[RMDB]
RNA sequence: GGGAACGACUCGAGUAGAGUCGAAAACAGAUCUUCAUUGGUCUAACCACCAGCAAUGUUUAAGAUCCACUGAUAGCUGGCUAAGUUAGUUAGAAAUAAGCUUAUGGUGUAAAAUAUAAUUUGAAUAGAUUAUACCACUAUUCGUAGUGGUAUAAUCAAAAGAAACAACAACAACAAC
Reactivity to DMS in 0.01 (KOAc 150mM, MgCl2 10mM, bicine 150mM(pH8.5), 24C), signal-to-noise 3, nucleotides 027 to 126: c180a110g000a030u000c030u000u010c140a090u010u000g000g000u010c050u000a090a080c210c150a090c050c070a060g000c070a070a060u010g020u000u030u050a040a070g000a080u030c040c020a020c030u000g000a090u020a050g030c000u000g000g000c030u000a010a040g010u010u050a070g030u000u030a000g010a030a040a100u020a090a050g000c000u010u010a060u030g010g020u000g000u000a060a060a060a080u060a080u030a050a090u020u000u010g000a040a080u030a150
Reactivity to 2A3 in 0.01 (KOAc 150mM, MgCl2 10mM, bicine 150mM(pH8.5), 24C), signal-to-noise 5, nucleotides 027 to 126: c030a010g020a050u030c020u170u100c040a070u060u030g040g010u010c020u070a080a090c050c030a020c010c000a010g070c040a010a110u070g050u060u190u070a060a020g040a030u010c020c000a010c030u000g060a090u110a130g010c010u010g080g000c020u000a120a000g080u140u250a020g030u020u020a010g090a040a300a120u260a180a010g000c010u060u030a060u220g050g010u040g010u080a050a100a170a000u240a030u060a080a230u190u000u000g090a130a080u000a060